[RMDB]
RNA sequence: GGGAACGACUCGAGUAGAGUCGAAAAUUGAACUUGUUUUUCGUGCUAGACUGAUGAUUCGCCCUUAUACAUAUUGGCUAACUUUCGGCUAAUCUUCACCGAAUUUAGUCAAGAAUUGGGUGGUACAAAACAAUUAGGUCUUCGGACCUAAUUGUUUAAAAGAAACAACAACAACAAC
Reactivity to 2A3 in 0.01 (KOAc 150mM, MgCl2 10mM, bicine 150mM(pH8.5), 24C), signal-to-noise 4, nucleotides 027 to 126: u080u100g040a010a040c050u050u070g050u040u080u010u060u060c060g040u080g050c020u070a070g020a270c060u060g050a070u080g030a100u200u060c020g000c010c000c020u060u120a170u030a110c090a080u150a060u010u020g010g000c000u000a000a020c070u030u030u010c000g000g010c020u070a190a160u130c180u260u120c080a040c000c000g000a000a000u000u000u000a000g000u010c000a000a000g020a020a060u080u030g040g000g020u020g010g010u060a050c030a040
Reactivity to DMS in 0.01 (KOAc 150mM, MgCl2 10mM, bicine 150mM(pH8.5), 24C), signal-to-noise 6, nucleotides 027 to 126: u010u020g010a100a220c250u000u000g000u020u010u010u000u000c050g010u010g000c060u000a050g020a110c070u010g020a100u010g000a140u010u010c010g010c010c000c010u000u020a080u020a120c250a070u000a160u010u000g010g000c000u000a010a010c200u000u000u000c000g000g000c140u000a100a100u010c180u000u020c210a180c000c010g000a000a010u000u000u000a000g010u000c000a010a000g010a070a110u000u010g000g000g030u000g010g000u010a050c100a090